[RMDB]
RNA sequence: GGGAACGACUCGAGUAGAGUCGAAAACAACUGGGCCAAGGGACACUACACAGAGGGCGCUGAGCUCAUCGACUCCGUGCUGGACGUUGUCCGCAAGGAGGCUGAGGGAUGCGAUUGCCUUCAGGGCAUGGUGACGUACGUUCGCGUACGUCACCAUAAAAGAAACAACAACAACAAC
Reactivity to DMS in 0.01 (KOAc 150mM, MgCl2 10mM, bicine 150mM(pH8.5), 24C), signal-to-noise 2, nucleotides 027 to 126: c070a100a060c130u030g000g030g020c050c050a070a110g020g010g010a080c100a030c070u000a080c150a060c110a070g000a060g000g000g020c020g000c010u000g030a300g020c010u000c010a080u000c100g000a180c000u000c010c020g030u000g000c040u030g050g000a020c020g020u000u020g010u000c000c000g010c020a020a030g000g000a000g010g020c050u010g000a020g000g000g010a160u000g030c010g010a130u000u000g010c020c010u000u000c040a080g000g010g000c080
Reactivity to 2A3 in 0.01 (KOAc 150mM, MgCl2 10mM, bicine 150mM(pH8.5), 24C), signal-to-noise 1, nucleotides 027 to 126: c020a020a020c000u060g080g020g000c070c010a090a040g030g000g040a010c000a020c080u090a000c110a000c020a080g050a060g030g010g000c020g000c050u040g020a000g030c000u000c030a070u060c010g060a040c000u000c010c000g000u030g020c030u100g010g030a000c050g240u090u300g010u000c010c010g040c000a020a020g000g000a010g000g060c030u070g020a050g030g070g010a000u040g000c010g080a090u040u220g040c010c000u030u010c090a060g010g060g040c050
Overview: The record gives the reactivity of an RNA of 177 nucleotides to DMS and 2A3. For DMS the reverse transcriptase was MarathonRT. It was measured as part of the RMDB library OK2TRN. The DMS profile rests on 1,226 reads.